[RMDB]
RNA sequence: GGGAACGACUCGAGUAGAGUCGAAAAUACUAUGCCUAGAAGGAAUGAUACUAUCACUAUUCAUCAUAUCGACUCUAAUUAUCCUAAACACACACUUCACCCUAGCUAACAUAAUACCCAUUAUUUUACUAGUGUUUGCAGCCUGCGAAGCUGCACUGGAGUAAUUGUAGUUCGCUACAAUUACUCCAAAAGAAACAACAACAACAAC
Reactivity to DMS in 0.01 (KOAc 150mM, MgCl2 10mM, bicine 150mM(pH8.5), 24C), signal-to-noise 1, nucleotides 027 to 156: u010a140c050u000a080u000g010c030c020u010a120g010a110a140g000g000a090a090u000g000a090u000a040c080u000a110u000c040a080c060u010a090u010u010c050a090u000c030a090u000a100u000c020g030a050c020u010c010u010a090a110u010u000a100u000c030c010u010a090a100a110c050a100c040a110c030a050c060u000u000c050a060c050c000c000u000a050g030c070u000a050a070c060a050u000a020a050u000a130c080c070c050a210u000u000a050u020u010u000u000a110c060u000a090g020u000g000u000u020u000g010c000a020g070c000c040u000g000c190g000a050a130g000c010u010g010c000a060c130u000
Reactivity to 2A3 in 0.01 (KOAc 150mM, MgCl2 10mM, bicine 150mM(pH8.5), 24C), signal-to-noise 7, nucleotides 027 to 156: u170a020c060u060a030u100g040c010c020u040a060g040a070a040g060g030a060a060u070g020a030u090a150c100u120a090u180c040a050c120u110a160u130u090c020a030u010c020a030u070a070u130c010g020a030c030u000c010u040a080a120u110u100a090u100c020c030u040a070a100a020c040a000c010a000c010a020c070u060u070c040a060c020c010c010u010a010g010c050u020a030a020c010a030u090a090a030u080a140c000c010c020a010u040u040a080u030u150u020u020a040c050u030a030g030u010g020u090u060u090g000c000a000g000c000c040u170g060c090g040a100a020g000c000u010g000c010a000c000u000
Source: RMDB library PDB130, as collected in RNAgym. The record gives the reactivity of an RNA of 207 nucleotides to DMS and 2A3. DMS adducts were read by reverse transcription with MarathonRT. Conditions: 150 mM KOAc, 10 mM MgCl2 and 150 mM bicine (pH 8.5), 24 C.